[RMDB]
Record summary
Chemical mapping of a 177-nucleotide RNA with DMS. Conditions: 150 mM KOAc, 10 mM MgCl2 and 150 mM bicine (pH 8.5), 24 C.
RNA sequence: GGGAACGACUCGAGUAGAGUCGAAAAGAUAUGGAAUUUCAUCUACGGCUAAUCCAAGGGAGCAACUAUCGGAAACGAUAGAAUUGCGAAGAACUUGAGAUUAGCCGUAGAUGAAAUUCCUAAGUCAGUUAUUAUCAUUGUUCGCAAUGAUAAUAACAAAAGAAACAACAACAACAAC
Reactivity to DMS in 0.01 (KOAc 150mM, MgCl2 10mM, bicine 150mM(pH8.5), 24C), signal-to-noise 3, nucleotides 027 to 126: g000a070u000a300u000g000g000a020a000u000u000u000c000a010u000c000u010a010c000g000g000c010u000a000a000u000c000c000a020a000g000g010g020a090g010c000a020a090c000u000a000u000c000g030g010a170a140a170c010g010a000u000a000g010a090a120u010u020g010c010g000a110a130g010a160a170c000u000u000g010a150g000a010u000u000a000g020c000c000g000u000a000g010a000u000g000a000a000a000u000u000c000c000u010a010a090g000u010c070a150
For DMS, 3,212 sequencing reads were counted.